This 207-nucleotide RNA was probed chemically with DMS and 2A3. The data come from the RNA Mapping Database (RMDB), library RSTRND. Values are in units of 0.01, from 0 to 300, in steps of 10. Values cover nucleotides 27 to 156.
RNA sequence: GGGAACGACUCGAGUAGAGUCGAAAACACUGAAUAGCAGCCCUAACGGGUGAGGUGGUUGCGCUUAUCAAACAAAUGUAAAUGCUAGUGAGAUUAUAAUCCUAGUCUUGUUAUACGAGACUGCUUUAUGGUCUUGCGAGACCCUCAAACUGCGGGAGCUAAAUGUAAGGUUCGCCUUACAUUUAGCAAAAGAAACAACAACAACAAC
Reactivity to DMS in 0.01 (KOAc 150mM, MgCl2 10mM, bicine 150mM(pH8.5), 24C), signal-to-noise 4, nucleotides 027 to 156: c050a140c040u000g010a100a170u000a090g020c020a140g020c000c010c030u010a100a140c150g030g000g020u000g000a090g010g030u000g010g020u010u000g020c040g000c060u000u000a110u000c080a110a070a150c070a060a080a110u000g010u000a030a040a060u010g020c020u000a050g020u010g000a010g000a030u000u000a010u000a020a020u010c010c010u000a020g010u000c000u000u000g020u000u000a160u000a170c040g010a010g010a020c000u000g010c010u000u000u000a010u000g010g010u000c000u000u000g000c020g000a050g020a070c000c010c010u000c030a050a040a130c050u000g000c030g010g010g040a170
Reactivity to 2A3 in 0.01 (KOAc 150mM, MgCl2 10mM, bicine 150mM(pH8.5), 24C), signal-to-noise 9, nucleotides 027 to 156: c060a010c040u110g050a090a060u070a110g030c050a010g010c010c010c040u070a110a040c080g030g000g020u040g020a020g000g020u050g010g040u040u100g030c040g010c040u100u100a090u210c070a060a030a110c040a040a140a070u150g040u130a050a080a040u100g030c010u010a010g010u000g020a010g000a010u000u020a010u030a040a020u020c030c090u080a010g010u000c000u020u030g060u140u190a180u070a210c030g000a000g000a000c000u000g000c000u010u020u010a020u030g000g000u000c000u000u020g000c000g010a020g030a070c010c010c000u030c040a110a150a080c040u070g010c030g030g030g000a040